Conditions: 150 mM KOAc, 10 mM MgCl2 and 150 mM bicine (pH 8.5), 24 C. An RNA of 207 nucleotides, treated with 2A3 and read out base by base. The data come from the RNA Mapping Database (RMDB), library M2RFPK.
RNA sequence: GGGAACGACUCGAGUAGAGUCGAAAAGACGUAAUCCGCGCAAAUCCACAAACGCCAACGAUGAGCGUUUCGCUGUAGCCGCUUAAGGCAACAGCCGGGACCGCCUGAGCCCUGUUACCAAAGACGGGAAACUCGAUGCCAUUCGUGGCAUCGAGAAACUCCUCAUGUUCUUCGGAACAUGAGGAGUAAAAGAAACAACAACAACAAC
Reactivity to 2A3 in 0.01 (KOAc 150mM, MgCl2 10mM, bicine 150mM(pH8.5), 24C), signal-to-noise 1, nucleotides 027 to 156: g010a000c020g020u050a070a040u040c010c030g040c000g040c040a030a120a130u130c150c060a080c040a040a030a020c030g020c020c010a130a100c120g170a120u110g050a110g020c020g030u020u070u060c050g000c010u000g000u040a010g000c010c000g040c180u220u300a090a000g000g020c000a030a000c000a000g020c030c000g010g000g000a020c020c050g030c010c010u030g020a010g000c010c000c000u000g040u050u090a090c010c000a060a050a030g030a010c020g000g000g130a130a020a000c000u000c010g000a000u010g000c000c000a050u090u090c210g050u050g010g000c000a000u000c000g000a000g010a000a000